This 177-nucleotide RNA was probed chemically with 2A3 and DMS.
The RNA was probed in 150 mM KOAc, 10 mM MgCl2 and 150 mM bicine (pH 8.5) at 24 C.
For DMS the reverse transcriptase was MarathonRT.
In probing experiments dimethyl sulfate is read out at A N1 and C N3, which are open when not base-paired.
As a SHAPE reagent, 2A3 marks flexible, mostly unpaired nucleotides at the ribose 2'-OH.
Source: RMDB libraries RFM100 and RFMREP, as collected in RNAgym.
RNA sequence: GGGAACGACUCGAGUAGAGUCGAAAAGGAGGAAAGCCCAAACUCUUCUUCGCCUCUAGAACUAGGGGCUGAGAUUUGGUUUCCUUGUUUUCCUGAUGCCUCCCAUGCCUAUUGUUCUCAGAUGCUCAGAUAGUUAUACUUUCGAGUAUAACUAUCUAAAAGAAACAACAACAACAAC
Reactivity to 2A3 in 0.01 (KOAc 150mM, MgCl2 10mM, bicine 150mM(pH8.5), 24C), signal-to-noise 9, nucleotides 027 to 126: g130g010a010g010g030a030a010a040g110c020c010c010a020a020a030c080u060c030u180u050c020u140u130c090g000c010c000u010c010u010a070g050a230a100c180u020a010g000g010g000g000c020u020g000a010g000a010u010u010u020g020g000u010u020u010c000c000u010u020g100u040u040u020u010c010c000u020g060a050u100g020c000c010u020c010c010c010a030u080g020c000c010u090a100u090u130g020u060u010c020u000c020a050g030a110u090g030c030u020c070
Reactivity to DMS in 0.01 (KOAc 150mM, MgCl2 10mM, bicine 150mM(pH8.5), 24C), signal-to-noise 9, nucleotides 027 to 126: g010g010a020g000g010a030a030a050g010c200c020c030a020a040a060c110u000c040u010u010c120u010u020c300g010c010c000u010c000u000a020g010a140a100c190u000a010g010g000g000g010c000u000g010a010g000a080u000u000u000g010g000u000u000u000c010c000u000u000g010u010u000u000u000c010c020u000g010a070u010g000c020c010u000c010c030c030a100u000g000c030c020u010a090u010u010g010u000u000c020u000c020a100g010a080u010g010c090u010c140